[RMDB]
RNA sequence: GGGAACGACUCGAGUAGAGUCGAAAAGCGGACGGACUAGUACUUGUACUACAGAAUUAACUGCCGUGUGCCGCCCGCUAAACUAGCCCCAAUCAUCGAAAAUGGAGAAACCGACAGUGCACGUUGACGAUUGUAGUAACUUCGGUUACUACAAUCGAAAAGAAACAACAACAACAAC
Reactivity to DMS in 0.01 (KOAc 150mM, MgCl2 10mM, bicine 150mM(pH8.5), 24C), signal-to-noise 2, nucleotides 027 to 126: g040c010g020g010a010c000g020g020a060c130u010a040g020u000a030c040u000u000g020u010a000c020u000a030c030a020g000a020a020u000u030a300a010c000u000g000c150c140g000u000g020u000g010c000c000g000c000c000c000g000c030u000a030a090a080c140u010a130g010c060c020c010c060a090a080u020c130a090u000c060g000a060a040a090a050u000g010g000a080g000a060a040a100c060c020g000a020c070a030g000u000g010c090a060c130g000u010u020g010a220
Reactivity to 2A3 in 0.01 (KOAc 150mM, MgCl2 10mM, bicine 150mM(pH8.5), 24C), signal-to-noise 3, nucleotides 027 to 126: g000c010g010g000a000c010g000g000a040c000u000a010g000u000a010c030u080u210g050u030a000c010u020a000c000a000g060a000a060u300u160a180a020c000u030g230c300c120g260u090g050u040g100c000c000g000c000c000c000g050c000u030a070a040a000c050u040a010g020c000c000c000c000a020a040u110c020a020u040c040g110a050a050a080a090u110g070g000a080g030a090a070a060c020c000g060a040c030a050g040u040g030c060a000c120g020u040u090g080a040

An RNA of 177 nucleotides, treated with DMS and 2A3 and read out base by base. For 2A3, 2,175 sequencing reads were counted. The data come from the RNA Mapping Database (RMDB), library RFMREP. The DMS profile rests on 1,473 reads. Conditions: 150 mM KOAc, 10 mM MgCl2 and 150 mM bicine (pH 8.5), 24 C.